The data come from the RNA Mapping Database (RMDB), library RFMREP.
Structure probing data (DMS and 2A3) for a 177-nucleotide construct.

RNA sequence: GGGAACGACUCGAGUAGAGUCGAAAACAGAAUUGCAAGUUCGUUUUGCAAGCGGCGGAUGCGCAUUGCACAAAGGACCGUGUACUUGCCCGCUCACAUUGGGCGGUUCCGUUGCUGCAAACUUGUUUAUCUUUUCAAUCUUCGGAUUGAAAAGAUAAAAAGAAACAACAACAACAAC
Reactivity to DMS in 0.01 (KOAc 150mM, MgCl2 10mM, bicine 150mM(pH8.5), 24C), signal-to-noise 2, nucleotides 027 to 126: c090a190g010a080a120u010u000g020c040a090a050g010u000u000c150g020u000u030u010u010g000c000a070a030g000c000g010g000c000g000g020a020u000g000c170g000c000a040u000u000g010c010a020c000a020a110a160g000g000a130c300c140g000u000g030u000a010c230u000u000g010c030c010c000g020c010u000c020a140c300a220u020u020g010g010g020c000g010g000u000u000c020c010g010u000u000g020c000u010g000c010a050a030a030c050u000u000g000u000u000
Reactivity to 2A3 in 0.01 (KOAc 150mM, MgCl2 10mM, bicine 150mM(pH8.5), 24C), signal-to-noise 2, nucleotides 027 to 126: c020a020g140a100a160u230u190g000c020a030a040g020u060u130c060g030u150u050u050u060g060c140a200a050g010c000g000g000c000g020g010a010u030g100c020g010c070a020u040u040g000c020a020c030a030a150a070g300g070a120c090c050g000u020g000u030a040c120u020u030g010c000c050c010g000c000u000c010a160c070a190u160u300g000g000g000c000g040g000u020u030c000c000g010u020u000g000c000u000g000c010a000a000a000c000u040u030g050u050u040
The RNA was probed in 150 mM KOAc, 10 mM MgCl2 and 150 mM bicine (pH 8.5) at 24 C.